[RMDB]
RNA sequence: GGGAACGACUCGAGUAGAGUCGAAAAAUGCACUGAGGUGAUUGCGUGUAAGCAUGGCCACCUAUGCGUUACCAUUGUAAAACCGUUUUGCUAAAAUCUAUCAUUCCUACGCAUCCAUAAUGUCCUACGGAGGAUAUCCAUUCGUGGAUAUCCUCCGAAAAGAAACAACAACAACAAC
Reactivity to DMS in 0.01 (KOAc 150mM, MgCl2 10mM, bicine 150mM(pH8.5), 24C), signal-to-noise 2, nucleotides 027 to 126: a060u010g000c020a020c220u010g020a030g020g050u010g030a110u020u000g010c030g000u010g000u010a060a120g000c000a010u000g020g030c190c060a030c070c000u000a040u000g010c020g000u010u000a130c030c050a080u000u000g000u000a030a070a150a070c060c080g020u000u000u000u000g020c030u000a050a060a100a060u000c070u000a050u000c050a180u010u000c020c020u000a080c130g040c050a070u020c000c010a060u000a040a090u010g010u000c020c020u000a130
Reactivity to 2A3 in 0.01 (KOAc 150mM, MgCl2 10mM, bicine 150mM(pH8.5), 24C), signal-to-noise 2, nucleotides 027 to 126: a000u020g000c000a000c080u120g080a060g020g060u060g050a150u080u010g010c040g010u060g010u080a130a000g020c010a010u060g070g000c050c010a040c020c000u020a040u070g000c030g000u040u050a040c000c040a050u070u140g040u090a070a060a040a050c050c060g060u000u010u090u080g000c050u040a090a090a000a050u040c070u050a070u060c040a070u040u090c000c000u030a010c040g000c020a000u000c020c030a050u100a180a100u230g030u090c000c000u070a050